[RMDB]
RNA sequence: GGGAACGACUCGAGUAGAGUCGAAAACGUCUUAAAUUAAAUUUCGCUUGCUGAGCUCAUCUCAGCAAACAAUAACAAAUAACAAAUAAGAACAGCAGGGAAGGUUGUUCUUAUUUGUUACAAUUAACUCUUUACCUAUGUUCGCAUAGGUAAAGAGAAAAGAAACAACAACAACAAC
Reactivity to 2A3 in 0.01 (KOAc 150mM, MgCl2 10mM, bicine 150mM(pH8.5), 24C), signal-to-noise 6, nucleotides 027 to 126: c020g040u040c060u130u190a150a190a190u130u160a120a150a180u120u260u100c070g010c040u010u020g000c000u000g000a010g000c090u090c140a190u110c060u000c010a010g030c000a000a010a000c010a020a050u180a060a020c060a060a120a040u070a010a020c000a010a010a000u010a000a010g000a010a000c000a000g040c020a020g150g040g180a070a040g110g010u010u000g000u020u010c010u000u000a000u000u000u000g000u000u010a000c000a000a020u080u060a030a030
Reactivity to DMS in 0.01 (KOAc 150mM, MgCl2 10mM, bicine 150mM(pH8.5), 24C), signal-to-noise 2, nucleotides 027 to 126: c120g010u040c050u010u010a080a060a080u020u000a040a110a160u030u000u020c100g040c040u000u000g000c000u000g020a020g000c270u030c300a110u000c000u000c000a020g000c020a000a040a030c050a050a070u010a080a080c120a100a080a200u000a010a010c010a010a020a000u000a010a010g000a000a010c000a000g020c000a020g010g020g040a090a070g020g020u000u000g000u000u000c000u000u000a000u000u000u000g010u000u000a000c090a090a110u010u000a070a130